[RMDB]
An RNA of 177 nucleotides, treated with DMS and 2A3 and read out base by base. The DMS profile rests on 2,435 reads. Values cover nucleotides 27 to 126. The data come from the RNA Mapping Database (RMDB), library OK1LIB. In probing experiments dimethyl sulfate is read out at A N1 and C N3, which are open when not base-paired. The RNA was probed in 150 mM KOAc, 10 mM MgCl2 and 150 mM bicine (pH 8.5) at 24 C.

RNA sequence: GGGAACGACUCGAGUAGAGUCGAAAAGAAGUGAGAGAAAAGAUGCGAAAAGAAAAGGCUGGGAAAAGAAAAAGCAUCGAAAAGUCGUGGAAACCAGCCGAAACACGACGAAAUCUCACUGAAGAAAGGGUAUUCAUUAGUUCGCUAAUGAAUACCCAAAAGAAACAACAACAACAAC
Reactivity to DMS in 0.01 (KOAc 150mM, MgCl2 10mM, bicine 150mM(pH8.5), 24C), signal-to-noise 2, nucleotides 027 to 126: g020a170a010g010u010g010a030g000a010g020a090a170a100a090g020a040u000g000c010g000a190a150a090a170g000a120a050a160a300g010g030c000u000g010g020g020a070a190a080a240g020a130a050a050a120a100g010c020a000u030c000g010a090a090a090a090g020u010c000g000u000g010g030a030a050a080c000c000a050g020c000c030g000a040a060a040c000a020c010g000a030c000g080a080a090a100u000c000u000c000a000c020u020g000a070a060g010a040a040a120
Reactivity to 2A3 in 0.01 (KOAc 150mM, MgCl2 10mM, bicine 150mM(pH8.5), 24C), signal-to-noise 2, nucleotides 027 to 126: g210a030a000g000u010g010a010g000a000g010a060a160a020a070g010a000u010g000c010g100a030a080a190a190g080a050a100a060a070g100g000c000u000g000g000g020a080a190a090a030g120a110a060a040a050a010g000c000a000u000c010g000a010a000a130a000g000u000c000g000u000g010g010a040a000a020c000c000a000g000c040c000g010a000a010a000c000a000c020g000a000c010g010a030a030a030u000c000u000c000a010c010u020g010a060a000g070a080a070a020